[RMDB]
RNA sequence: GGGAACGACUCGAGUAGAGUCGAAAAGCUUCCAGAGAUAAGUGAUUAAAAUAAUGACUUUUCAGGCAGCUGCCUAAUUGACAGAUCAGCCUAUUUACCUCAGGGACAGGGGCCAAGCUACCUGCUCAAUGCCUUCGUAAUUCGUUACGAAGGCAUUAAAAGAAACAACAACAACAAC
Reactivity to 2A3 in 0.01 (KOAc 150mM, MgCl2 10mM, bicine 150mM(pH8.5), 24C), signal-to-noise 2, nucleotides 027 to 126: g000c010u020u000c000c010a020g010a000g000a190u060a040a020g000u050g000a040u040u060a070a180a150a270u240a030a040u040g040a040c020u000u030u040u030c010a000g010g000c000a010g010c010u040g030c010c000u140a160a190u110u090g040a030c050a010g060a070u080c050a010g040c010c000u030a090u020u050u050a080c000c000u050c030a010g090g000g040a010c030a030g040g010g060g000c030c030a000a010g010c010u030a080c020c000u020g040c020u010c050
Reactivity to DMS in 0.01 (KOAc 150mM, MgCl2 10mM, bicine 150mM(pH8.5), 24C), signal-to-noise 3, nucleotides 027 to 126: g010c040u000u010c010c010a140g020a130g000a050u010a020a010g020u000g000a030u010u000a070a120a130a190u020a050a010u000g010a040c010u010u000u000u010c040a110g010g010c050a050g020c010u000g000c010c000u000a050a070u000u000g000a060c080a030g000a060u000c100a090g010c040c030u000a110u000u000u010a120c040c010u000c100a130g010g000g000a040c090a030g000g000g020g020c020c050a050a090g000c050u000a060c020c040u000g000c100u010c050
The record gives the reactivity of an RNA of 177 nucleotides to 2A3 and DMS. The 2A3 profile rests on 1,436 reads. Conditions: 150 mM KOAc, 10 mM MgCl2 and 150 mM bicine (pH 8.5), 24 C. For DMS, 2,345 sequencing reads were counted.